[RMDB]
RNA sequence: GGGAACGACUCGAGUAGAGUCGAAAAUUAAACGCAACGACUCGAGUAGAGUCGAAAACAAAACGACUCGAGUACAGUCGAAAACCCAACGACUCGAGUAGAGUCGAAGCGAACGCAAGCGAAAAAAGUUAUAUGCACGAUUCGUCGUGCAUAUAACAAAAGAAACAACAACAACAAC
Reactivity to DMS in 0.01 (KOAc 150mM, MgCl2 10mM, bicine 150mM(pH8.5), 24C), signal-to-noise 1, nucleotides 027 to 126: u000u000a120a160a160c180g010c160a030a150c000g000a000c000u000c000g000a060g010u000a070g000a010g000u000c000g000a020a010a030a040c120a010a020a130a050c010g010a000c000u000c000g000a160g010u010a090c270a010g010u000c000g000a100a040a080a070c000c000c000a040a180c000g000a000c000u000c000g010a080g000u000a050g000a020g010u000c000g010a030a150g010c010g000a110a100c130g010c160a080a060g000c100g030a010a030a140a040a040a070
Reactivity to 2A3 in 0.01 (KOAc 150mM, MgCl2 10mM, bicine 150mM(pH8.5), 24C), signal-to-noise 3, nucleotides 027 to 126: u060u050a070a030a060c300g000c300a020a000c000g000a000c000u000c000g020a020g040u080a010g020a000g000u010c000g000a000a000a000a000c180a160a170a000a000c000g000a000c000u000c010g010a030g090u080a060c160a020g000u000c010g020a030a010a020a020c000c000c000a000a010c000g000a000c000u000c010g020a030g070u100a020g030a000g000u010c000g000a030a000g000c010g020a050a010c070g010c120a040a050g060c040g120a140a070a000a000a000a000

This 177-nucleotide RNA was probed chemically with DMS and 2A3. For DMS the reverse transcriptase was MarathonRT. For 2A3, 10,229 sequencing reads were counted. It was measured as part of the RMDB library M2PK90. The reactions ran in a buffer of 150 mM KOAc, 10 mM MgCl2 and 150 mM bicine (pH 8.5), at 24 C.